[RMDB]
RNA sequence: GGGAACGACUCGAGUAGAGUCGAAAAAGGAUGUUCCCCAGCCAGGGAUUGUCAUCCUCGAGUUUCUUGAUGGUUCUUCUCGUCUUCCGGAUCCUCCUCUCGAGGUCUUCCAGAUCUUUCCUUGCUUCGACCCACUUUGAGAGGACAUCCUCCCGUCGACUGUACGUUAGUUCGCUAACGUACAGUCAAAAGAAACAACAACAACAAC
Reactivity to DMS in 0.01 (KOAc 150mM, MgCl2 10mM, bicine 150mM(pH8.5), 24C), signal-to-noise 1, nucleotides 027 to 156: a040g010g040a080u000g020u000u000c010c020c000c030a050g000c160c080a160g020g050g020a070u000u000g030u020c050a190u000c020c000u010c060g000a160g010u020u010u010c040u030u000g000a220u000g010g000u000u000c020u000u010c030u000c040g020u000c060u000u020c090c060g000g020a110u000c040c010u000c020c110u000c100u030c020g020a010g030g050u010c040u000u000c050c010a050g020a070u010c040u000u000u000c020c040u000u000g010c060u000u000c080g070a150c000c030c060a140c050u020u000u000g020a110g030a060g060g000a110c050a100u000c020c000u000c010c000c030g030u000c070
Reactivity to 2A3 in 0.01 (KOAc 150mM, MgCl2 10mM, bicine 150mM(pH8.5), 24C), signal-to-noise 4, nucleotides 027 to 156: a000g040g000a030u020g030u110u060c020c010c000c000a020g080c040c030a020g000g030g000a020u070u110g060u070c030a030u030c010c000u020c010g060a070g020u030u090u080c080u100u170g040a070u110g020g010u040u040c010u140u030c060u020c060g200u030c060u210u040c060c020g030g010a050u070c010c030u020c020c020u070c020u020c070g030a030g000g050u010c040u100u030c050c040a040g010a090u010c020u020u050u040c030c000u050u060g030c020u070u120c030g070a070c030c040c020a090c100u120u140u120g060a110g010a040g010g020a000c000a010u010c010c020u040c020c000c000g080u080c070